An RNA of 207 nucleotides, treated with DMS and 2A3 and read out base by base. Reactivities are given for positions 27 through 156. 2A3 adducts were read by reverse transcription with SuperScript II with manganese. The data come from the RNA Mapping Database (RMDB), library M2RFPK. For DMS, 4,952 sequencing reads were counted.

RNA sequence: GGGAACGACUCGAGUAGAGUCGAAAAAGUUAGGUUCGCUAUGGUGCAACUCUUUAAGGCAAUAACGAACUAAUUCUAAGUAAGUAAUGGAGAAAUGCCAGGGUCACUAUCUAGCCAUAAUAGUGCUGUAAGUGACUUAGAUUCGUCUAAGUCACAACGCAUACAUGUGUUUCGACACAUGUAUGCGAAAAGAAACAACAACAACAAC
Reactivity to DMS in 0.01 (KOAc 150mM, MgCl2 10mM, bicine 150mM(pH8.5), 24C), signal-to-noise 3, nucleotides 027 to 156: a080g000u000u020a080g010g020u000u000c040g020c040u000a030u000g030g000u000g030c000a090a110c080u000c130u000u000u000a090a150g000g020c030a110a070u000a030a080c030g020a020a020c030u000a020a100u000u000c040u000a080a110g020u010a130a140g010u010a080a080u010g020g000a130g010a060a120a080u000g020c000c010a070g010g010g020u000c030a050c030u000a060u000c040u010a110g000c030c070a090u000a030a090u000a060g020u000g010c040u000g000u000a040a120g030u000g020a030c000u010u010a000g010a080u000u020c300g020u000c000u000a010a030g020u000c020a040c010a040a060
Reactivity to 2A3 in 0.01 (KOAc 150mM, MgCl2 10mM, bicine 150mM(pH8.5), 24C), signal-to-noise 5, nucleotides 027 to 156: a000g120u110u060a040g030g030u020u030c020g000c020u030a020u070g100g020u060g070c060a110a120c050u060c070u120u240u190a130a070g030g000c030a040a040u090a100a010c060g020a000a000c030u040a010a020u080u040c050u050a000a130g060u010a050a010g030u010a110a110u130g060g020a060g040a070a030a020u070g030c020c000a040g010g000g010u010c010a000c010u020a040u140c050u050a000g030c000c010a020u030a150a070u050a120g050u040g080c120u080g020u090a150a070g000u000g000a000c000u010u000a000g000a000u010u040c100g020u010c140u000a000a000g000u000c000a000c000a000a010